[RMDB]
Structure probing data (DMS and 2A3) for a 177-nucleotide construct. For 2A3 the reverse transcriptase was SuperScript II with manganese. The RNA was probed in 150 mM KOAc, 10 mM MgCl2 and 150 mM bicine (pH 8.5) at 24 C. For DMS, 10,252 sequencing reads were counted. Source: RMDB library OK2TST, as collected in RNAgym.
RNA sequence: GGGAACGACUCGAGUAGAGUCGAAAAGGUCGUGACCGGCAACGACUACCGUUCUCAGGUGCUCGAGCAGUUGCCGGAGAUGCCGAUCGAGAACCUGCUGGUCGAGCCCGCGGCGCGGGACACUGCCCAAACUGGGCAGUUUCGACUGCCCAGUUUGAAAAGAAACAACAACAACAAC
Reactivity to DMS in 0.01 (KOAc 150mM, MgCl2 10mM, bicine 150mM(pH8.5), 24C), signal-to-noise 7, nucleotides 027 to 126: g010g020u000c010g020u000g010a140c020c010g000g000c010a110a040c030g000a080c050u000a190c080c040g010u000u000c080u010c050a130g020g020u000g010c030u000c070g000a050g000c080a110g010u010u000g010c000c010g000g000a060g000a090u000g010c080c070g000a120u000c030g010a100g000a070a090c070c030u000g020c100u000g000g010u000c040g000a080g010c010c020c010g020c100g010g010c090g040c040g010g010g010a080c170a050c060u000g010c060c050
Reactivity to 2A3 in 0.01 (KOAc 150mM, MgCl2 10mM, bicine 150mM(pH8.5), 24C), signal-to-noise 4, nucleotides 027 to 126: g020g010u030c010g040u050g040a060c010c000g000g010c010a020a000c010g040a010c010u050a040c020c030g070u150u070c090u040c080a060g070g010u070g030c020u020c050g060a050g040c050a060g030u070u050g010c020c010g040g000a010g010a010u160g100c070c040g020a030u030c040g000a020g010a070a050c000c020u030g010c020u040g030g060u040c030g030a050g030c000c010c000g030c020g100g030c080g010c040g030g010g030a030c050a030c070u110g000c010c000